RNA sequence: GGGAACGACUCGAGUAGAGUCGAAAAAUCAGAGGGCGCUAUCAUGCAAACUAGGAUUGUCCGCUCAUGCACAGAACCAACUACCGAUAACUAACAGUGCAUGAAGGUUAGUUAUUCCAUAUUAAUUAAAACUCGUAAUUCUUCGGAAUUACGAGAAGAAUUGAGCGUUCUUCGGAACGCUCAAUUCAAAAGAAACAACAACAACAAC
Reactivity to 2A3 in 0.01 (KOAc 150mM, MgCl2 10mM, bicine 150mM(pH8.5), 24C), signal-to-noise 1, nucleotides 027 to 156: a020u060c090a050g010a110g010g050g000c010g000c000u160a080u300c090a080u290g000c080a000a050a000c000u010a000g020g040a050u060u000g010u030c020c020g030c030u000c000a000u020g000c020a020c000a030g080a220a080c080c040a060a100c100u160a110c050c100g030a000u010a050a000c010u010a000a000c010a040g010u000g000c000a000u000g050a010a000g000g000u000u000a000g000u000u000a010u090u170c020c020a140u110a040u230u180a190a130u110u120a030a010a030a060c000u000c000g000u000a000a000u020u000c000u050u060c170g020g010a000a000u030u000a000c000g000a000g000a000a000
The record gives the reactivity of an RNA of 207 nucleotides to 2A3. For 2A3, 450 sequencing reads were counted. It was measured as part of the RMDB library M2RFOK.